The data come from the RNA Mapping Database (RMDB), library OK2TRN. An RNA of 177 nucleotides, treated with DMS and read out base by base. The RNA was probed in 150 mM KOAc, 10 mM MgCl2 and 150 mM bicine (pH 8.5) at 24 C.

[RMDB]
RNA sequence: GGGAACGACUCGAGUAGAGUCGAAAAGAGACCAUCCUGGCCAACGUGGUGAAACCCCGUCUCUAAUAAAAAUACAAAAAUUAGACUGGCCUUGUGGCGCACGCCUGUAGUCCCAGCUACUCUGGAGUAUUUCUUUUCACUUCGGUGAAAAGAAAUAAAAAGAAACAACAACAACAAC
Reactivity to DMS in 0.01 (KOAc 150mM, MgCl2 10mM, bicine 150mM(pH8.5), 24C), signal-to-noise 1, nucleotides 027 to 126: g030a170g000a100c020c010a030u000c050c040u000g000g030c020c000a070a070c100g000u010g000g010u000g020a030a100a140c030c020c000c030g000u000c030u000c010u000a030a070u020a000a020a040a070a090u000a080c060a020a080a040a050a060u000u000a040g010a060c160u000g020g000c030c050u000u000g020u000g000g000c080g030c070a000c150g000c040c010u000g000u000a040g020u000c010c000c000a130g000c060u000a080c050u000c040u000g000g010a200g010